Conditions: 150 mM KOAc, 10 mM MgCl2 and 150 mM bicine (pH 8.5), 24 C. An RNA of 207 nucleotides, treated with 2A3 and DMS and read out base by base. For DMS, 2,369 sequencing reads were counted.
RNA sequence: GGGAACGACUCGAGUAGAGUCGAAAAGGGGUCGAAUGUAUAAGUACUAUAUCAAGCUUGGAUUUAUAUGGCUGAAGCCUCCACGGCCAUAUUGUCAGCUUGUUAUAGGAUUGACAUUCGACGGAGGCACCCAAACCCAUCGGUUCGCCGAUGGGAACAUCUAAAAUGCCUUCGGGCAUUUUAGAUGAAAAGAAACAACAACAACAAC
Reactivity to 2A3 in 0.01 (KOAc 150mM, MgCl2 10mM, bicine 150mM(pH8.5), 24C), signal-to-noise 4, nucleotides 027 to 156: g020g010g040g000u020c000g010a010a000u010g060u010a120u040a300a160g130u120a080c000u000a000u010a000u010c010a000a000g020c030u250u300g100g010a030u100u300u020a020u060a000u010g000g000c000u020g010a080a020g010c010c000u000c000c010a010c000g000g000c000c000a000u000a000u000u030g030u030c060a010g010c000u000u000g000u030u000a000u000a010g010g070a040u070u200g030a000c000a000u010u000c000g000a000c000g010g000a000g010g000c000a040c000c000c000a080a090a130c010c000c000a000u000c010g010g050u040u050c250g040c110c000g000a000u010g010g000g000a000a020
Reactivity to DMS in 0.01 (KOAc 150mM, MgCl2 10mM, bicine 150mM(pH8.5), 24C), signal-to-noise 1, nucleotides 027 to 156: g000g030g020g000u000c010g050a080a020u000g060u000a070u010a120a220g070u010a110c020u000a040u000a010u000c020a000a010g000c020u000u010g040g010a070u010u000u000a010u010a010u000g000g000c000u010g030a060a100g020c030c000u020c010c040a300c080g000g020c010c000a040u000a000u000u000g020u010c040a040g020c010u000u000g010u010u000a000u000a030g020g040a160u000u000g020a040c030a030u000u000c030g000a000c000g000g030a030g060g060c010a120c010c000c020a070a090a140c040c000c010a000u000c010g000g020u000u010c300g010c000c000g020a020u000g010g030g000a020a030